[RMDB]
RNA sequence: GGGAACGACUCGAGUAGAGUCGAAAAAUGGGCGUCUUCCGUGCUGCUUGUUGGGGAACUUAGGUUCUCUCCUCUCCGAGGAGGUGUCGUGCGUGCGGGAGGCGACCAUAUUUUAUUGUUCCCUCCUCAGAUCGGAAGGGUUCGCCCUUCCGAUCUGAAAAGAAACAACAACAACAAC
Reactivity to 2A3 in 0.01 (KOAc 150mM, MgCl2 10mM, bicine 150mM(pH8.5), 24C), signal-to-noise 3, nucleotides 027 to 126: a020u000g000g020g010c000g000u030c000u000u020c000c000g000u000g000c030u100g000c020u080u270g060u000u230g100g000g000g000a010a000c010u040u090a300g080g020u010u000c030u020c030u090c010c000u000c030u080c090c150g110a160g050g020a020g030g020u060g080u160c040g010u030g050c000g000u000g010c000g000g000g000a000g000g000c030g000a000c000c000a000u000a060u000u030u010u000a220u030u150g000u000u000c000c000c000u000c000c020u000